An RNA of 177 nucleotides, treated with 2A3 and DMS and read out base by base.
The data come from the RNA Mapping Database (RMDB), library OK2TST.
High DMS reactivity at an A or C suggests that its Watson-Crick edge is free.
The RNA was probed in 150 mM KOAc, 10 mM MgCl2 and 150 mM bicine (pH 8.5) at 24 C.

RNA sequence: GGGAACGACUCGAGUAGAGUCGAAAAAUGUUGGCGAAGGUGCCACGAAUCAUCACCUCGUGGUUGCCGCGGCGAGAACCGAAGGAGUUGUAGUCCUUGCGGUCGACACCGUGUUCGUCGAGGUAGCAUCGUUCGUCAGUUUCGACUGACGAACGAUAAAAGAAACAACAACAACAAC
Reactivity to 2A3 in 0.01 (KOAc 150mM, MgCl2 10mM, bicine 150mM(pH8.5), 24C), signal-to-noise 3, nucleotides 027 to 126: a000u210g050u060u030g010g000c060g060a120a090g000g080u090g040c040c020a040c010g040a020a050u140c120a110u150c050a120c030c000u000c010g050u020g070g090u160u250g040c050c000g000c010g000g000c010g010a080g010a020a020c010c020g000a010a010g000g030a040g000u140u200g210u300a090g140u040c000c000u010u100g210c020g030g010u010c010g000a010c020a010c000c000g040u020g140u080u030c030g020u010c030g030a050g030g080u030a030g080c040
Reactivity to DMS in 0.01 (KOAc 150mM, MgCl2 10mM, bicine 150mM(pH8.5), 24C), signal-to-noise 3, nucleotides 027 to 126: a130u000g020u010u010g000g020c020g010a060a110g030g010u010g000c020c030a010c020g020a050a050u000c190a140u000c160a120c170c080u010c010g010u000g010g020u000u010g010c180c000g020c020g010g000c040g010a150g000a150a020c010c000g000a090a000g000g000a070g000u010u010g010u000a260g000u000c010c010u000u010g010c000g000g010u000c030g010a300c200a020c020c030g000u000g000u000u000c020g010u010c030g000a040g000g000u010a110g010c100